[RMDB]
RNA sequence: GGGAACGACUCGAGUAGAGUCGAAAAGAUUCUACUCAAAAGACCUUAUCAUUGAAGCAGUAAAUAUAUCCUACACAAACGCCUGAGCCCUACUAAUAACAUUAAUUGCCACAUCCCUAACCGCUGCCUACAGCACUCGAAUUAUCUUCUUUGCAUUAAUACAGAAUAGGUUCGCCUAUUCUGUAUUAAAAGAAACAACAACAACAAC
Reactivity to DMS in 0.01 (KOAc 150mM, MgCl2 10mM, bicine 150mM(pH8.5), 24C), signal-to-noise 2, nucleotides 027 to 156: g000a040u040u000c000u010a050c000u010c010a070a100a090a120g000a100c040c020u000u010a070u010c040a090u010u010g000a130a100g010c050a080g040u010a040a080a090u010a100u000a100u000c020c010u000a110c070a110c030a020a080a090c100g000c020c000u000g010a130g000c040c000c000u000a160c070u020a040a120u000a120a060c040a090u000u000a040a120u010u000g000c000c030a060c030a070u000c010c000c000u000a050a100c040c020g020c060u020g050c040c020u000a070c090a090g020c080a110c030u000c010g010a060a040u000u000a120u010c060u000u020c040u000u000u020g000c050a190u020u000
Reactivity to 2A3 in 0.01 (KOAc 150mM, MgCl2 10mM, bicine 150mM(pH8.5), 24C), signal-to-noise 4, nucleotides 027 to 156: g000a000u000u000c000u000a010c000u010c000a000a030a000a110g040a020c010c000u050u100a130u100c060a060u010u160g040a070a000g020c050a010g050u130a020a150a040u150a020u020a050u130c020c030u070a030c020a010c010a060a200a000c060g020c010c010u030g020a020g020c020c040c010u050a050c000u040a050a100u080a130a030c020a040u160u140a080a100u120u110g010c000c010a050c000a060u030c010c010c000u020a040a020c030c030g020c030u010g010c010c010u050a060c020a020g010c020a020c060u050c030g030a040a050u110u060a080u130c060u130u020c000u030u040u100g020c000a040u050u050
Annotation:
This 207-nucleotide RNA was probed chemically with DMS and 2A3. DMS adducts were read by reverse transcription with MarathonRT. Source: RMDB library PDB130, as collected in RNAgym. For 2A3 the reverse transcriptase was SuperScript II with manganese. The RNA was probed in 150 mM KOAc, 10 mM MgCl2 and 150 mM bicine (pH 8.5) at 24 C. For 2A3, 3,124 sequencing reads were counted.